[RMDB]
An RNA of 207 nucleotides, treated with 2A3 and DMS and read out base by base.
RNA sequence: GGGAACGACUCGAGUAGAGUCGAAAAAUGUUUUCGAACAUAUAAGUGGGGUCGAGCUAGCAGAGGGUUAGACAUGCUCUGAAGCCUCCACGGAGCAACAGCUAACCUCCCCACCUGCGGCUCGACGGAGGCACCCGGAAUACCUAUUCGUAGGUAAAAUUAGGCAUCAUUUCGAUGAUGCCUAAUUAAAAGAAACAACAACAACAAC
Reactivity to 2A3 in 0.01 (KOAc 150mM, MgCl2 10mM, bicine 150mM(pH8.5), 24C), signal-to-noise 2, nucleotides 027 to 156: a010u080g030u020u030u070u100c060g060a040a010c030a000u070a010u150a280a180g100u300g090g080g030g000u000c000g000a000g000c020u090a060g000c000a010g000a060g000g000g030u000u010a010g010a060c010a160u230g000c000u000c000u030g050a070a020g010c010c000u000c000c000a010c020g000g010a000g000c050a020a110c060a110g200c020u010a000a000c020c000u050c040c000c020c020a060c010c000u000g010c000g010g000c020u020c000g010a010c000g000g000a000g010g050c000a000c000c020c000g030g030a090a070u090a060c000c000u030a050u110u180c210g060u050a020g050g000u030a100a100
Reactivity to DMS in 0.01 (KOAc 150mM, MgCl2 10mM, bicine 150mM(pH8.5), 24C), signal-to-noise 1, nucleotides 027 to 156: a070u010g040u000u000u000u000c120g020a080a110c020a060u000a130u000a100a210g050u020g050g030g090g020u020c020g000a100g030c030u000a100g110c010a040g000a180g000g000g020u000u000a020g030a110c040a210u000g000c010u000c000u000g040a020a050g050c000c000u000c000c010a300c050g000g000a020g000c010a140a040c060a070g010c000u000a040a000c010c020u020c300c000c000c050a250c150c020u010g040c030g010g000c000u000c000g050a010c060g030g030a040g050g060c030a050c020c020c040g020g000a090a160u000a070c010c000u000a050u000u020c300g000u000a010g010g060u000a020a010

Reactivities are given for positions 27 through 156. Conditions: 150 mM KOAc, 10 mM MgCl2 and 150 mM bicine (pH 8.5), 24 C.